The record gives the reactivity of an RNA of 177 nucleotides to DMS and 2A3. For 2A3, 4,096 sequencing reads were counted. DMS adducts were read by reverse transcription with MarathonRT. For 2A3 the reverse transcriptase was SuperScript II with manganese.

RNA sequence: GGGAACGACUCGAGUAGAGUCGAAAAGGGUUACCGUUCGCGGUAACCCAAAUAAAAUCAGCGGUAAGCUCCGGUAAAAUAUUACCGCUGAACGGGAGCUUAAAAUCGAUGUGUUCGCACAUCGAAACAGACUUUAAGUGUUCGCACUUAAAGUCUGAAAAGAAACAACAACAACAAC
Reactivity to DMS in 0.01 (KOAc 150mM, MgCl2 10mM, bicine 150mM(pH8.5), 24C), signal-to-noise 3, nucleotides 027 to 126: g030g010g000u020u010a000c000c010g030u000u010c230g040c020g010g010u010a000a010c000c000c000a000a030a030u000a070a050a150a140u010c020a000g010c000g020g010u000a010a010g010c130u010c080c060g000g000u000a060a050a110a080u000a080u010u000a030c000c010g010c010u000g000a030a060c190g000g010g000a110g000c100u000u000a050a070a080a140u000c000g000a000u000g020u000g010u000u010c240g010c010a000c010a010u000c000g000a020a030a090
Reactivity to 2A3 in 0.01 (KOAc 150mM, MgCl2 10mM, bicine 150mM(pH8.5), 24C), signal-to-noise 3, nucleotides 027 to 126: g000g000g010u000u010a000c000c000g000u030u060c210g000c010g090g010u000a000a000c000c000c010a010a010a010u010a000a020a010a100u020c000a010g010c000g020g020u010a030a000g010c030u000c050c030g090g070u100a120a150a080a060u200a100u060u030a010c000c000g000c000u000g010a000a000c010g030g060g020a050g030c000u100u260a050a100a050a100u060c010g010a000u000g010u000g010u040u060c120g040c070a000c000a000u000c000g000a000a000a000